This 177-nucleotide RNA was probed chemically with DMS. The RNA was probed in 150 mM KOAc, 10 mM MgCl2 and 150 mM bicine (pH 8.5) at 24 C. For DMS the reverse transcriptase was MarathonRT. For DMS, 607 sequencing reads were counted.
RNA sequence: GGGAACGACUCGAGUAGAGUCGAAAAGACGACUUCCUCACUAUUUGACUACCGGGGAGGAUUUCUAUAUACUUGGGACACCAUGACCAGCAGGAACACGUCCGCCCAACCCGAACCCCAGUUCAAGAACCGUCUCUUUAUUCGUAAAGAGACGGUUAAAAGAAACAACAACAACAAC
Reactivity to DMS in 0.01 (KOAc 150mM, MgCl2 10mM, bicine 150mM(pH8.5), 24C), signal-to-noise 1, nucleotides 027 to 126: g020a100c130g000a070c090u000u000c010c000u010c030a090c070u010a110u010u000u000g010a110c030u000a080c120c140g010g010g000g000a060g000g010a060u000u000u000c050u000a140u000a080u030a130c080u010u020g030g010g000a110c130a140c020c030a040u000g000a110c020c000a080g020c080a040g000g050a140a040c150a060c140g000u000c030c090g020c020c010c030a070a090c000c000c000g030a150a240c050c000c020c030a190g000u000u000c110a060a130g010
Notes: Values cover nucleotides 27 to 126.